[RMDB]
RNA sequence: GGGAACGACUCGAGUAGAGUCGAAAACUCUGAUAGUGGUUGCAUUCUUCCAUCUGAGUGCACUAUGUUUAGGGAUGCAGAGGGCCGUAUGACACCAUACUGCCAUGAUCCUACUGUUUUGCCUGGGGAUCAAGGACAAGUUCGCUUGUCCUUGAUCAAAAGAAACAACAACAACAAC
Reactivity to DMS in 0.01 (KOAc 150mM, MgCl2 10mM, bicine 150mM(pH8.5), 24C), signal-to-noise 2, nucleotides 027 to 126: c010u000c040u000g020a060u000a150g020u000g010g030u010u010g010c010a010u000u000c020u000u010c120c130a060u000c190u010g000a030g050u000g010c040a060c020u000a020u000g010u000u000u000a050g030g020g010a080u010g010c050a040g000a100g020g000g020c040c070g020u000a030u000g010a180c210a130c300c010a030u000a040c040u000g030c010c010a060u010g000a050u000c030c010u000a040c080u000g010u000u000u010u000g000c060c000u010g000g010g020
Reactivity to 2A3 in 0.01 (KOAc 150mM, MgCl2 10mM, bicine 150mM(pH8.5), 24C), signal-to-noise 2, nucleotides 027 to 126: c010u010c030u030g030a050u020a120g060u010g090g030u170u130g020c010a030u000u000c040u120u080c100c020a230u070c070u050g010a000g020u010g010c000a000c000u030a030u060g050u020u050u080a030g020g030g020a020u070g030c020a020g030a060g110g010g000c020c000g020u000a000u030g050a090c060a010c090c090a000u000a010c000u000g010c010c000a000u040g010a000u020c020c000u020a120c010u060g140u060u040u060u080g080c020c030u030g040g030g040
Background
The data come from the RNA Mapping Database (RMDB), library 15KREP. This 177-nucleotide RNA was probed chemically with DMS and 2A3. For 2A3, 1,676 sequencing reads were counted. The DMS profile rests on 1,969 reads. Values cover nucleotides 27 to 126. For 2A3 the reverse transcriptase was SuperScript II with manganese. The reactions ran in a buffer of 150 mM KOAc, 10 mM MgCl2 and 150 mM bicine (pH 8.5), at 24 C.